[RMDB]
RNA sequence: GGGAACGACUCGAGUAGAGUCGAAAACAAAAACAGGAGAGCAAACCAAUCCCGGAUGCAAAAGCAUUACAAGAUAUAUGCUCCCGAACUCGGAGUUUCAUCACUUGCAGAUGCAACAAAAACAAAAGCGACUACUACUGUUCGCAGUAGUAGUCGCAAAAGAAACAACAACAACAAC
Reactivity to 2A3 in 0.01 (KOAc 150mM, MgCl2 10mM, bicine 150mM(pH8.5), 24C), signal-to-noise 1, nucleotides 027 to 126: c000a000a070a060a000a020c100a000g100g000a100g000a000g090c040a280a000a000c000c010a010a030u000c000c000c000g020g000a070u110g000c100a000a300a000a000g070c000a000u000u150a000c010a300a080g000a000u080a000u040a000u160g000c000u020c000c060c000g050a280a200c060u000c000g170g000a000g000u000u050u000c110a150u090c020a020c000u110u190g000c000a000g000a180u000g000c000a000a130c060a030a020a000a030a000c160a020a140a000a000
An RNA of 177 nucleotides, treated with 2A3 and read out base by base. The reactions ran in a buffer of 150 mM KOAc, 10 mM MgCl2 and 150 mM bicine (pH 8.5), at 24 C. It was measured as part of the RMDB library OK1LIB.